Conditions: 150 mM KOAc, 10 mM MgCl2 and 150 mM bicine (pH 8.5), 24 C. Chemical mapping of a 207-nucleotide RNA with DMS. For DMS the reverse transcriptase was MarathonRT. It was measured as part of the RMDB library RNAMAK.
RNA sequence: GGGAACGACUCGAGUAGAGUCGAAAACGCUGGGCGUCCGAAGUCGAUACUACCCACCCUACCUGAAGCGCGCACGGGUAGGAGGUAUUCGACUAAGGACGCCUGUGCUGAAGCGCGCACGGCAACCGAAAGGUGCGACACGUUCUGUUCGCAGAACAUUCAAGAUGCCAUUCGUGGCAUCUUGAAUAAAAGAAACAACAACAACAAC
Reactivity to DMS in 0.01 (KOAc 150mM, MgCl2 10mM, bicine 150mM(pH8.5), 24C), signal-to-noise 1, nucleotides 027 to 156: c030g020c000u010g010g000g040c020g000u000c010c000g000a240a090g010u000c000g020a070u000a020c000u000a120c020c030c150a300c050c020c010u000a000c000c020u020g000a050a020g010c020g100c010g010c020a300c050g000g000g000u000a000g020g020a060g040g020u000a040u020u000c010g010a050c000u040a080a300g000g000a020c000g040c010c000u000g010u000g100c020u000g000a110a040g040c020g000c020g030c000a300c050g020g000c030a060a090c020c000g020a050a030a190g000g020u000g000c020g010a150c130a050c200g000u000u000c000u000g020u000u000c110g000c040a050g010a090a030c090